[RMDB]
Annotation
This 177-nucleotide RNA was probed chemically with 2A3. Reactivities are given for positions 27 through 126. The RNA was probed in 150 mM KOAc, 10 mM MgCl2 and 150 mM bicine (pH 8.5) at 24 C. The data come from the RNA Mapping Database (RMDB), library OK1LIB.
RNA sequence: GGGAACGACUCGAGUAGAGUCGAAAAGAAAAGAGCGUAAUCGCGUCUUGACGUGAGUGAGACUAGACUGUAGGCUAUCCCAAGUGGGAUAGCAUAUCUCACAAUACGCUGAUCUACAGUCAAAAGACGCCAGUCAGGUAUUCGUACCUGACUGGCGAAAAGAAACAACAACAACAAC
Reactivity to 2A3 in 0.01 (KOAc 150mM, MgCl2 10mM, bicine 150mM(pH8.5), 24C), signal-to-noise 3, nucleotides 027 to 126: g250a020a070a010a000g010a000g000c000g000u010a040a060u060c020g000c010g000u040c080u100u270g120a040c020g020u000g020a030g000u000g000a010g010a000c020u020a070g000a010c000u010g000u000a010g000g050c000u000a000u000c030c000c000a120a190g280u300g020g000g000a000u000a000g010c000a000u020a010u000c000u000c000a000c000a010a030u070a000c000g000c010u030g010a070u030c000u000a000c000a000g000u010c000a000a000a050a000g050a000